[RMDB]
RNA sequence: GGGAACGACUCGAGUAGAGUCGAAAACGCUGGCCGGGACUACAACUCAAGCCGUCGGAUACGCCGUGCAGGAUUCGGCGGACGGUGACGCGCUGCGUCAAAGAUCGGUGAUUGGCGGCUCGAAGCCUGUCAACGAGUGAUUCGUCACUCGUUGACAAAAAGAAACAACAACAACAAC
Reactivity to 2A3 in 0.01 (KOAc 150mM, MgCl2 10mM, bicine 150mM(pH8.5), 24C), signal-to-noise 4, nucleotides 027 to 126: c030g000c040u040g010g000c000c010g020g000g010a020c010u060a030c080a160a030c010u060c080a050a010g010c000c010g000u000c000g020g020a040u070a120c040g030c020c020g030u110g060c130a130g010g070a070u050u040c010g010g000c000g000g000a010c010g040g040u100g030a010c010g010c000g030c070u120g000c010g010u010c010a090a110a000g070a060u060c020g030g020u040g020a130u010u120g010g000c000g010g010c000u010c010g050a060a000g040c010c010
Reactivity to DMS in 0.01 (KOAc 150mM, MgCl2 10mM, bicine 150mM(pH8.5), 24C), signal-to-noise 2, nucleotides 027 to 126: c100g000c080u020g020g010c030c030g000g010g000a130c010u010a050c170a100a180c070u010c060a060a060g020c010c000g010u020c000g000g010a090u010a140c090g000c010c070g010u040g020c220a110g020g010a080u020u000c010g000g000c000g000g000a030c040g030g000u040g000a050c040g000c110g020c090u010g000c030g000u020c100a090a090a100g010a100u020c030g000g020u010g000a070u010u020g010g000c040g000g000c010u050c000g010a050a160g010c080c050